[RMDB]
RNA sequence: GGGAACGACUCGAGUAGAGUCGAAAAGUAAAGUUCGCUUUACGUUAUCGCGUACUACUCAGUUUAAGCCAUAUGGAGAGGAACUCCCAAAUAGGAGUUCCCUCUAUGAAGUAUGGAAUACAACUGAGUAUCGCUUGAAGUUAGGUUCGCCUAACAAUCUUACACAUACAUUCGUGUAUGUGUAAGAAAAAGAAACAACAACAACAAC
Reactivity to 2A3 in 0.01 (KOAc 150mM, MgCl2 10mM, bicine 150mM(pH8.5), 24C), signal-to-noise 7, nucleotides 027 to 156: g000u020a000a010a010g010u030u170c210g030c100u010u010u010a020c030g080u110u160a230u300c090g000c010g030u070a120c040u000a000c000u020c010a010g010u000u010u030a030a010g040c000c000a000u000a000u040g040g010a020g040a070g030g010a000a000c000u030c020c020c040a110a260a130u300a130g000g000a010g000u000u000c080c010c000u000c000u000a130u010g090a040a010g010u010a000u010g020g030a050a030u100a100c070a020a000c010u000g000a000g000u000a000u030c000g010c000u010u170g130a170a030g000u000u000a010g020g020u050u070c250g090c040c000u010a000a000c000a010a020
Reactivity to DMS in 0.01 (KOAc 150mM, MgCl2 10mM, bicine 150mM(pH8.5), 24C), signal-to-noise 5, nucleotides 027 to 156: g020u000a020a020a040g020u000u000c280g010c010u000u000u000a010c030g030u010u000a070u000c060g020c010g020u010a080c140u000a020c010u000c000a020g000u000u010u000a230a300g000c020c000a010u000a010u000g020g010a020g010a050g040g010a060a020c010u000c000c000c000a070a120a200u010a040g020g000a030g020u000u000c070c010c000u010c000u010a070u000g020a130a270g000u010a020u000g000g010a060a070u000a140c130a030a030c010u000g010a030g000u000a010u000c030g000c030u000u000g010a100a160g010u000u000a010g020g020u000u010c300g030c020c000u000a010a030c010a060a120
Overview:
This 207-nucleotide RNA was probed chemically with 2A3 and DMS. In probing experiments dimethyl sulfate is read out at A N1 and C N3, which are open when not base-paired. For DMS the reverse transcriptase was MarathonRT. For 2A3, 9,666 sequencing reads were counted. High 2A3 reactivity points to a flexible backbone, as in loops and unpaired stretches. The reactions ran in a buffer of 150 mM KOAc, 10 mM MgCl2 and 150 mM bicine (pH 8.5), at 24 C.